[RMDB]
Chemical mapping of a 177-nucleotide RNA with 2A3 and DMS.

RNA sequence: GGGAACGACUCGAGUAGAGUCGAAAAGAGUCCUAUUUCGAUAGGACUCAACUAAAAUCAGCGGUAUAUAAUUAGCUGGCGUUACCGCUGAACGCCAGCAUACUAGCCUCGUCUUCGGACGAGGCAACAGCGUUUAUGAUUUCGAUCAUAAACGCUGAAAAGAAACAACAACAACAAC
Reactivity to 2A3 in 0.01 (KOAc 150mM, MgCl2 10mM, bicine 150mM(pH8.5), 24C), signal-to-noise 3, nucleotides 027 to 126: g010a000g000u040c000c000u010a050u000u090u050c160g080a020u000a000g000g030a000c000u000c000a000a000c000u100a050a000a020a100u030c000a000g010c000g210g100u020a070u000a010u000a090a170u130u190a050g000c000u000g000g000c000g000u010u020a160c000c010g000c020u000g000a000a000c000g000c000c010a010g000c010a010u070a040c100u090a050g000c000c000u010c000g020u000c010u010u060c230g070g000a000c000g000a000g010g000c000a000a000
Reactivity to DMS in 0.01 (KOAc 150mM, MgCl2 10mM, bicine 150mM(pH8.5), 24C), signal-to-noise 1, nucleotides 027 to 126: g000a020g010u000c000c000u000a020u000u000u010c160g020a010u000a000g000g000a010c010u000c010a020a050c060u010a070a050a070a120u000c020a000g020c020g040g000u000a060u000a030u010a030a030u000u000a120g010c000u000g000g000c010g000u010u010a120c040c020g000c000u000g010a000a030c020g010c010c000a020g010c020a120u000a060c220u000a070g020c000c000u000c010g000u000c010u000u020c160g040g000a010c010g000a020g030g010c000a010a010

As a SHAPE reagent, 2A3 marks flexible, mostly unpaired nucleotides at the ribose 2'-OH. 2A3 adducts were read by reverse transcription with SuperScript II with manganese. For DMS, 1,252 sequencing reads were counted. Conditions: 150 mM KOAc, 10 mM MgCl2 and 150 mM bicine (pH 8.5), 24 C.